[RMDB]
RNA sequence: GGGAACGACUCGAGUAGAGUCGAAAAUGCACAACGGCGCGCUGGUCAACCACGCUUACUCCUAUGAGCAGCUCUUUGAGCCCAAUGUGCUCGGCAGCGUGGAGGUGAUGCGGAUGGCUCUGGCAAAAUGAACUUGUUGUUUCGACAACAAGUUCAUAAAAGAAACAACAACAACAAC
Reactivity to DMS in 0.01 (KOAc 150mM, MgCl2 10mM, bicine 150mM(pH8.5), 24C), signal-to-noise 4, nucleotides 027 to 126: u020g010c030a080c100a060a110c090g000g020c030g020c080g020c040u000g010g010u000c080a100a150c050c010a060c040g010c020u000u010a100c150u010c050c130u000a060u010g010a050g010c050a140g000c020u000c030u000u010u000g020a050g010c010c110c150a070a070u010g010u000g010c010u000c030g010g040c200a050g000c020g020u010g010g000a090g010g000u000g000a050u000g030c060g020g000a090u000g000g010c000u010c040u000g000g000c070a060a040a070
Reactivity to 2A3 in 0.01 (KOAc 150mM, MgCl2 10mM, bicine 150mM(pH8.5), 24C), signal-to-noise 3, nucleotides 027 to 126: u070g040c020a030c020a160a040c070g040g000c020g000c000g010c060u030g060g020u040c030a050a080c060c010a010c030g010c000u000u100a110c050u080c020c050u110a120u180g020a010g020c010a010g020c000u010c030u110u190u300g030a020g020c000c020c040a100a130u260g010u090g050c020u010c000g020g010c040a010g000c030g000u020g000g020a010g020g000u070g040a060u140g000c030g030g040a030u050g080g010c030u000c000u040g000g000c010a080a020a000

An RNA of 177 nucleotides, treated with DMS and 2A3 and read out base by base. For DMS, 4,150 sequencing reads were counted. The RNA was probed in 150 mM KOAc, 10 mM MgCl2 and 150 mM bicine (pH 8.5) at 24 C. It was measured as part of the RMDB library OK2TRN.